[RMDB]
RNA sequence: GGGAACGACUCGAGUAGAGUCGAAAAAAUAUGUUGCACUACAUCCGGGAGAUAUUAUUGCAACUGGUACACCAGCAGGCGUUGGUGCAGGUAUGCAACCACCUAAAUUUUUACAACCAGGUGAUGAACAGUCCAGUAUGUUCGCAUACUGGACUGUAAAAGAAACAACAACAACAAC
Reactivity to 2A3 in 0.01 (KOAc 150mM, MgCl2 10mM, bicine 150mM(pH8.5), 24C), signal-to-noise 3, nucleotides 027 to 126: a000a000u290a090u160g020u010u010g000c030a010c020u090a030c010a030u030c020c020g020g140g000a090g010a050u150a040u110u180a100u140u200g070c020a040a060c040u040g040g010u040a020c010a010c020c000a000g000c050a080g200g170c070g190u060u040g010g000u000g000c030a040g030g050u100a040u120g030c060a040a000c000c030a030c030c000u050a110a140a190u150u230u050u050u100a090c060a070a020c020c030a060g000g030u050g030a200u070g050a030
Reactivity to DMS in 0.01 (KOAc 150mM, MgCl2 10mM, bicine 150mM(pH8.5), 24C), signal-to-noise 2, nucleotides 027 to 126: a060a070u070a040u050g000u030u010g030c010a040c070u000a040c170a120u030c000c020g000g000g000a190g030a040u000a040u010u000a190u010u010g020c000a030a100c020u000g000g030u030a150c030a040c000c000a020g020c000a190g010g030c190g000u000u000g000g010u000g000c020a100g000g000u000a030u000g000c040a040a080c030c050a010c020c040u030a050a060a110u040u010u010u030u000a070c190a090a100c140c070a050g000g000u000g000a100u000g060a130